[RMDB]
RNA sequence: GGGAACGACUCGAGUAGAGUCGAAAAGGAUGUGGAACCCCAUGAAAAGUUAUGUAGAGGAAUCCGGCGUAUGCCAUGCUGUGGAGCGGCAUGAGAAAUUACAUAUGCUUUUAGGCUCUCAUAUCUAAUAACAUUUCUUAUUCGUAAGAAAUGUUAUAAAAGAAACAACAACAACAAC
Reactivity to 2A3 in 0.01 (KOAc 150mM, MgCl2 10mM, bicine 150mM(pH8.5), 24C), signal-to-noise 7, nucleotides 027 to 126: g020g000a050u100g020u080g130g050a070a090c040c000c010c020a050u160g070a070a150a010a020g010u020u020a020u050g040u230a010g010a010g030g070a150a050u040c040c000g000g000c010g010u020a000u010g040c000c000a010u010g000c000u030g020u180g150g110a150g140c010g010g000c010a010u010g020a050g040a210a130a020u160u050a010c000a010u020a000u040g000c000u060u050u050u140a060g060g000c000u000c010u010c010a010u010a020u050c010u030a060
Reactivity to DMS in 0.01 (KOAc 150mM, MgCl2 10mM, bicine 150mM(pH8.5), 24C), signal-to-noise 9, nucleotides 027 to 126: g010g010a060u000g010u010g010g010a090a170c050c020c040c070a110u020g000a070a070a070a060g010u000u000a010u000g010u010a030g010a050g010g010a090a090u000c070c070g010g000c010g020u000a020u000g000c060c010a030u000g000c010u000g020u010g020g010a150g020c050g000g010c010a010u000g000a130g000a100a050a100u010u010a240c010a010u000a010u000g000c000u000u000u000u010a120g010g000c010u000c010u000c020a020u000a020u010c010u000a090

Overview:
Source: RMDB library OK2TST, as collected in RNAgym. Structure probing data (2A3 and DMS) for a 177-nucleotide construct. High 2A3 reactivity points to a flexible backbone, as in loops and unpaired stretches. For 2A3 the reverse transcriptase was SuperScript II with manganese.